[RMDB]
RNA sequence: GGGAACGACUCGAGUAGAGUCGAAAACGGCCCUGUUCCUGCCCGCGUUGGUUUCGAGCUCCUGGAGAAACCUCAGGAGGGCUUCGGGGUGAAGGUCGGUAUGGAACUCAAUCACUGUGUUGAGGAACUACAUGACAAAGUUCGCUUUGUCAUGUAGAAAAGAAACAACAACAACAAC
Reactivity to DMS in 0.01 (KOAc 150mM, MgCl2 10mM, bicine 150mM(pH8.5), 24C), signal-to-noise 8, nucleotides 027 to 126: c120g010g000c010c000c010u010g010u010u030c010c010u000g010c010c010c040g010c120g010u010u000g010g020u000u000u000c020g010a130g000c040u000c020c010u010g020g010a300g000a090a070a080c090c010u000c090a060g010g000a100g020g000g010c040u010u010c090g010g000g000g010u000g000a070a060g000g010u000c190g010g010u000a050u010g020g010a080a150c010u000c050a020a020u000c040a150c210u010g020u010g010u000u000g000a020g000g010a090a190
Reactivity to 2A3 in 0.01 (KOAc 150mM, MgCl2 10mM, bicine 150mM(pH8.5), 24C), signal-to-noise 3, nucleotides 027 to 126: c010g060g000c010c010c020u010g030u030u020c010c010u020g030c010c000c000g070c070g100u060u080g040g010u030u000u040c030g010a030g020c030u040c050c020u070g050g010a100g050a110a130a060c010c010u010c010a070g070g000a040g040g020g000c000u080u100c030g010g000g000g020u050g120a030a000g000g000u020c010g020g000u060a140u190g100g040a070a060c000u000c030a030a040u060c050a090c300u180g020u010g020u190u020g010a030g020g010a020a040
Structure probing data (DMS and 2A3) for a 177-nucleotide construct. The DMS profile rests on 11,558 reads.